An RNA of 177 nucleotides, treated with 2A3 and DMS and read out base by base. Source: RMDB library OK1LIB, as collected in RNAgym.
[RMDB]
RNA sequence: GGGAACGACUCGAGUAGAGUCGAAAAAAAGCCACACACUCGGUUUCAACGUACCUGGGCAGUAAACAAAGGAAUACAGUUGUUCCAUGGAUAUUAUGUGUAUUAGCAUACUAUGGGCCGAUGUGGACAAUUGGAUGUUAUUCGUAACAUCCAAUUGAAAAGAAACAACAACAACAAC
Reactivity to 2A3 in 0.01 (KOAc 150mM, MgCl2 10mM, bicine 150mM(pH8.5), 24C), signal-to-noise 9, nucleotides 027 to 126: a000a000a000g090c010c000a030c000a000c000a010c060u010c000g030g010u060u160u110c020a020a020c020g020u020a030c010c010u040g020g130g000c120a100g110u240a060a120a050c080a050a100a020g050g020a130a100u080a070c080a130g020u010u010g020u080u010c000c010a010u020g040g000a030u050a080u300u090a020u090g090u010g070u040a260u120u220a150g010c000a000u000a030c000u020a020u010g000g010g000c010c000g010a010u040g020u010g020g020a010
Reactivity to DMS in 0.01 (KOAc 150mM, MgCl2 10mM, bicine 150mM(pH8.5), 24C), signal-to-noise 9, nucleotides 027 to 126: a050a050a070g000c020c010a080c060a060c060a050c120u000c010g000g000u010u020u010c020a030a040c040g010u000a030c040c010u010g000g010g020c140a120g010u050a070a090a100c100a060a070a040g000g000a090a080u010a040c070a110g010u000u000g000u010u040c000c000a020u000g010g000a110u020a080u030u010a010u000g010u000g010u040a110u040u040a140g010c010a020u000a020c030u000a010u000g000g000g000c010c010g010a020u010g000u000g010g010a180
The 2A3 profile rests on 21,561 reads.